The record gives the reactivity of an RNA of 177 nucleotides to DMS and 2A3.
RNA sequence: GGGAACGACUCGAGUAGAGUCGAAAACAGGCUCCUCUCCCCUUUGUUCAGUGGAGCUGGCUUUUCUCCCAGCCCCUUUCCAUGCCUUUCACUCCAUUUGGCAAGCUCUGAGGGGGAGCCUGGGGACUCAUCCCCAAGUUUUCGAACUUGGGGAUGAAAAAGAAACAACAACAACAAC
Reactivity to DMS in 0.01 (KOAc 150mM, MgCl2 10mM, bicine 150mM(pH8.5), 24C), signal-to-noise 2, nucleotides 027 to 126: c040a030g000g020c000u010c000c000u000c020u000c010c030c060c090u020u000u010g010u010u010c060a030g010u000g010g000a030g020c090u000g000g020c080u010u000u000u010c090u010c050c020c010a170g000c030c020c010c060u000u020u000c050c040a070u000g000c020c010u000u000u000c200a170c040u010c020c010a060u000u010u000g010g000c000a040a020g000c160u000c100u000g010a070g010g000g020g000g010a010g010c010c000u000g000g000g000g000a090c120
Reactivity to 2A3 in 0.01 (KOAc 150mM, MgCl2 10mM, bicine 150mM(pH8.5), 24C), signal-to-noise 1, nucleotides 027 to 126: c010a000g010g000c000u010c040c020u020c050u020c020c000c010c050u080u110u100g070u130u240c040a020g020u020g070g010a000g000c000u000g040g030c030u120u130u130u060c100u020c000c030c010a030g030c020c030c000c020u040u010u060c020c040a040u060g050c020c010u050u190u170c040a010c030u020c010c010a060u050u080u110g020g000c000a000a010g000c030u070c050u180g030a140g050g000g010g000g000a000g000c010c010u010g010g000g000g030a020c050
Values cover nucleotides 27 to 126. For DMS the reverse transcriptase was MarathonRT. For 2A3 the reverse transcriptase was SuperScript II with manganese.